[RMDB]
RNA sequence: GGGAACGACUCGAGUAGAGUCGAAAACGAGGUGAAAGUGCGAGACGGGCUCUUCCUUCUCAAGCGUCUGCAUGGCCUCCGGUUAGUGGUAGAAGGAGUUUUACCGGACCCGUGUCAGCACCAGCAUGCCUAUAAUCGAUUUCGAUCGAUUAUAGGCAAAAGAAACAACAACAACAAC
Reactivity to 2A3 in 0.01 (KOAc 150mM, MgCl2 10mM, bicine 150mM(pH8.5), 24C), signal-to-noise 9, nucleotides 027 to 126: c030g030a060g090g020u080g080a260a070a060g010u020g020c010g010a030g020a020c010g010g000g040c030u030c020u090u100c010c000u020u010c010u000c040a050a040g030c030g060u050c040u080g060c040a100u140g030g010c000c020u010c000c020g030g030u050u160a100g040u100g240g060u080a010g010a020a010g080g050a030g010u100u130u180u150a060c010c000g010g010a030c000c000c010g000u010g110u030c030a020g000c010a010c000c000a010g050c010a040u090
Reactivity to DMS in 0.01 (KOAc 150mM, MgCl2 10mM, bicine 150mM(pH8.5), 24C), signal-to-noise 3, nucleotides 027 to 126: c070g000a090g010g040u000g000a130a070a220g020u010g000c050g030a190g000a000c040g000g000g010c160u040c050u020u050c010c000u000u020c000u010c030a110a120g000c030g010u030c070u030g030c030a110u000g000g000c040c040u010c030c000g010g010u000u000a110g040u020g010g000u040a050g010a030a010g000g000a100g030u030u020u000u030a100c100c140g000g000a170c110c000c020g030u000g030u010c020a170g020c000a030c010c060a170g010c070a120u020